[RMDB]
RNA sequence: GGGAACGACUCGAGUAGAGUCGAAAACCUACUCAAUACGUCCUCGUCGUACAGAACGGUAACAUGUUUUACGAACAUCCGCGCUUGGGUAUACGAGUAUACACCUUACCCAACCCUCGCCAACGGGAGUGCAUCCACGAGUUCGCUCGUGGAUGAAGGAGUUAACACCAUUCGUGGUGUUAACUCCAAAAGAAACAACAACAACAAC
Reactivity to 2A3 in 0.01 (KOAc 150mM, MgCl2 10mM, bicine 150mM(pH8.5), 24C), signal-to-noise 4, nucleotides 027 to 156: c000c010u010a030c030u040c040a020a190u120a140c040g050u040c020c040u050c020g060u010c010g000u080a070c010a070g140a130a030c060g070g030u080a090a030c060a120u080g020u050u030u030u090a060c080g010a060a010c050a090u050c000c020g050c010g000c050u030u030g010g000g050u040a040u010a050c070g030a040g070u020a030u050a070c110a110c020c050u090u100a030c000c000c010a020a030c020c000c000u040c030g010c050c030a090a050c030g030g000g000a040g030u090g040c000a000u010c000c000a000c000g010a000g000u070u060c170g060c080u000c000g000u000g000g030a000u000g000a000a000
Reactivity to DMS in 0.01 (KOAc 150mM, MgCl2 10mM, bicine 150mM(pH8.5), 24C), signal-to-noise 1, nucleotides 027 to 156: c050c040u000a080c050u000c040a090a160u000a120c020g010u000c000c010u000c010g000u010c110g000u000a070c080a130g030a100a050c010g000g010u000a060a190c170a030u000g000u000u010u000u000a090c090g010a070a080c040a020u000c010c030g020c040g000c050u010u010g010g010g050u000a060u000a060c070g030a140g040u000a060u000a100c060a160c080c020u000u010a040c010c000c010a050a100c040c000c010u000c110g010c020c020a070a070c020g000g020g030a060g020u000g000c010a020u010c000c010a010c010g010a040g080u000u010c300g000c010u000c010g040u010g000g020a000u010g020a060a100
Chemical mapping of a 207-nucleotide RNA with 2A3 and DMS. For DMS the reverse transcriptase was MarathonRT.